[RMDB]
RNA sequence: GGGAACGACUCGAGUAGAGUCGAAAAAGCCGACUGUACGCAGUCGGCAAGCGCGUCGUGUCAGGUACUAGGUGACUCUGAGUGGAAUGGUCUCAGAGACGCCUCGUGCCUCAGCACGGCGGCGCAAAACCCCUCUCGAUUUCGAUCGAGAGGGGUUAAAAGAAACAACAACAACAAC
Reactivity to 2A3 in 0.01 (KOAc 150mM, MgCl2 10mM, bicine 150mM(pH8.5), 24C), signal-to-noise 2, nucleotides 027 to 126: a000g000c000c000g020a010c020u020g020u030a040c240g010c100a010g000u000c000g000g000c010a000a000g020c010g000c020g000u010c000g000u000g110u120c040a010g000g000u010a000c000u030a000g000g000u000g030a040c000u020c000u020g010a020g030u180g000g230a170a300u270g120g170u060c010u000c000a000g010a000g030a030c000g000c000c000u000c000g010u000g000c000c000u020c000a000g000c000a000c010g000g000c000g000g000c000g000c030a060a070
Reactivity to DMS in 0.01 (KOAc 150mM, MgCl2 10mM, bicine 150mM(pH8.5), 24C), signal-to-noise 1, nucleotides 027 to 126: a130g020c030c000g000a010c000u000g000u020a150c270g020c000a040g000u040c000g050g000c020a000a000g010c000g000c000g000u040c000g000u000g010u000c300a160g010g000u000a000c000u000a020g050g020u020g000a140c000u000c000u000g000a030g000u010g030g000a140a160u020g000g000u030c000u000c000a000g000a020g010a000c000g000c000c000u000c140g010u000g000c000c000u000c090a140g000c000a010c000g000g000c010g010g010c020g030c000a050a040